An RNA of 177 nucleotides, treated with 2A3 and DMS and read out base by base.
Values cover nucleotides 27 to 126.
For 2A3, 9,821 sequencing reads were counted.
The RNA was probed in 150 mM KOAc, 10 mM MgCl2 and 150 mM bicine (pH 8.5) at 24 C.
[RMDB]
RNA sequence: GGGAACGACUCGAGUAGAGUCGAAAAACCGCCGACCUGGUGGACUGCGCCGCGCAGCACCGCUCCGGCCAGUGGCGCAGCGCAAGCGUACUGCGCAUCGCGCAGGAGCUGGCGGCGCCCUACGGCGCUUUGGUAUACCUUUCGAGGUAUACCAAAGAAAAGAAACAACAACAACAAC
Reactivity to 2A3 in 0.01 (KOAc 150mM, MgCl2 10mM, bicine 150mM(pH8.5), 24C), signal-to-noise 5, nucleotides 027 to 126: a000c020c010g010c020c020g080a170c010c070u120g050g030u050g040g100a050c040u060g000c030g010c120c030g110c040g010c080a020g000c030a070c060c060g010c020u030c030c020g090g000c020c010a090g020u120g080g010c010g000c010a020g030c040g000c050a060a020g040c020g150u250a040c020u020g000c010g030c060a150u210c170g000c010g000c020a030g020g010a020g000c010u010g020g000c000g020g020c000g000c000c000c000u060a040c030g040g000c010g000
Reactivity to DMS in 0.01 (KOAc 150mM, MgCl2 10mM, bicine 150mM(pH8.5), 24C), signal-to-noise 8, nucleotides 027 to 126: a140c050c010g020c040c020g000a150c120c060u000g010g020u000g010g010a150c060u000g010c030g020c090c090g000c100g030c050a070g010c050a070c060c050g010c060u010c060c050g010g010c030c040a110g010u010g010g010c000g010c000a030g010c030g020c050a060a040g010c050g000u010a230c010u000g000c000g020c020a080u010c200g020c060g020c010a040g010g000a230g000c010u000g010g020c000g010g010c000g010c000c020c040u000a080c060g010g010c030g010